[RMDB]
RNA sequence: GGGAACGACUCGAGUAGAGUCGAAAAGGCUCGAAAGCACCUAGGAGAGCCAUCCAAUAACUCUCUCUCUCUCAAUAAGGAUGGUAGGUGCAGAGAGAGAAAUAAAAGAAAGAGCCGAAAAGAAAAAGGGUAAACAAUACUUCGGUAUUGUUUACCCAAAAGAAACAACAACAACAAC
Reactivity to 2A3 in 0.01 (KOAc 150mM, MgCl2 10mM, bicine 150mM(pH8.5), 24C), signal-to-noise 2, nucleotides 027 to 126: g000g000c000u000c000g020a020a080a000g080c030a000c000c040u080a080g000g250a120g180a010g070c000c000a000u000c000c000a050a080u230a110a050c000u010c000u000c060u030c000u000c000u030c000u090c010a090a190u190a160a050g020g010a010u020g030g110u020a020g020g010u000g000c070a000g020a000g000a000g020a000g000a000a050a000u030a000a040a020a000g050a020a030a000g030a000g020c000c040g050a040a050a090a010g140a000a090a010a000a000
Reactivity to DMS in 0.01 (KOAc 150mM, MgCl2 10mM, bicine 150mM(pH8.5), 24C), signal-to-noise 1, nucleotides 027 to 126: g000g060c000u040c000g020a100a140a090g000c000a000c030c000u000a150g000g040a230g020a130g000c000c020a000u000c010c040a240a090u040a210a110c150u030c040u000c070u000c000u000c000u030c020u020c240a060a100u000a120a220g000g000a010u000g000g050u000a030g000g000u000g000c020a030g000a020g000a070g000a020g000a000a070a060u030a110a050a070a080g090a140a190a120g000a070g000c010c000g040a030a030a080a070g000a040a010a040a090a090

Notes:
Chemical mapping of a 177-nucleotide RNA with 2A3 and DMS. For DMS the reverse transcriptase was MarathonRT. The reactions ran in a buffer of 150 mM KOAc, 10 mM MgCl2 and 150 mM bicine (pH 8.5), at 24 C. The DMS profile rests on 1,491 reads.